Structure probing data (DMS) for a 177-nucleotide construct. The RNA was probed in 150 mM KOAc, 10 mM MgCl2 and 150 mM bicine (pH 8.5) at 24 C. The data come from the RNA Mapping Database (RMDB), library TTRDES.

[RMDB]
RNA sequence: GGGAACGACUCGAGUAGAGUCGAAAAAAGAUAUGGAGCUCCCUAAGAGCUUGGAUUUAUGGGAAAGUCAUGGUCGGAAACGACCAUGUCUUCCCAUUGUCAGCUCGAUGGGAGCUCCUAAGUCAAACAAUCCUAGUACCUUCGGGUACUAGGAUUGAAAAGAAACAACAACAACAAC
Reactivity to DMS in 0.01 (KOAc 150mM, MgCl2 10mM, bicine 150mM(pH8.5), 24C), signal-to-noise 3, nucleotides 027 to 126: a110a110g020a060u000a300u000g000g010a040g010c010u000c000c000c000u010a210a300g010a000g010c000u000u000g030g000a020u010u010u010a000u000g000g000g000a020a030a100g010u000c000a010u000g010g010u010c000g010g010a120a130a220c020g010a000c000c000a000u010g000u000c000u000u000c010c000c000a000u000u000g000u000c000a020g010c020u010c000g010a300u010g000g010g020a010g010c000u000c000c000u000a010a060g010u000c010a110a130a300